[RMDB]
RNA sequence: GGGAACGACUCGAGUAGAGUCGAAAACUGCUGGCGGCAUGGAAAUGGAGAUUCAUGAGCUGAAGACGAAGCUGGCCGAGUUGGAGAAACAAGAGCCGGUGGCAUGGGGAGCCUUCCAUUUCGGCGGUCGAAUACUGACAUUCGUGUCAGUAUUCGAAAAAGAAACAACAACAACAAC
Reactivity to DMS in 0.01 (KOAc 150mM, MgCl2 10mM, bicine 150mM(pH8.5), 24C), signal-to-noise 2, nucleotides 027 to 126: c020u010g010c040u000g000g000c020g030g010c040a050u000g010g000a010a070a080u010g000g000a100g000a110u010u000c040a040u000g000a180g020c060u000g010a090a090g010a100c130g010a070a140g010c040u000g010g010c020c020g010a200g010u000u000g000g000a130g020a150a040a050c070a090a200g010a180g000c010c030g030g030u010g000g010c030a020u000g000g000g000g020a060g000c020c020u000u000c010c020a020u000u010u000c010g010g000c090g000g000
Reactivity to 2A3 in 0.01 (KOAc 150mM, MgCl2 10mM, bicine 150mM(pH8.5), 24C), signal-to-noise 1, nucleotides 027 to 126: c000u020g010c050u030g080g090c030g050g000c010a040u050g040g050a040a050a080u140g050g020a090g000a050u080u050c020a020u020g060a030g000c050u060g070a070a040g080a020c060g080a050a020g000c010u020g000g050c040c010g030a030g030u020u070g100g050a200g140a040a140a010c030a130a070g000a020g110c000c050g010g030u040g000g020c030a020u050g000g000g000g050a020g020c000c000u010u030c000c010a030u000u040u060c020g000g020c020g000g040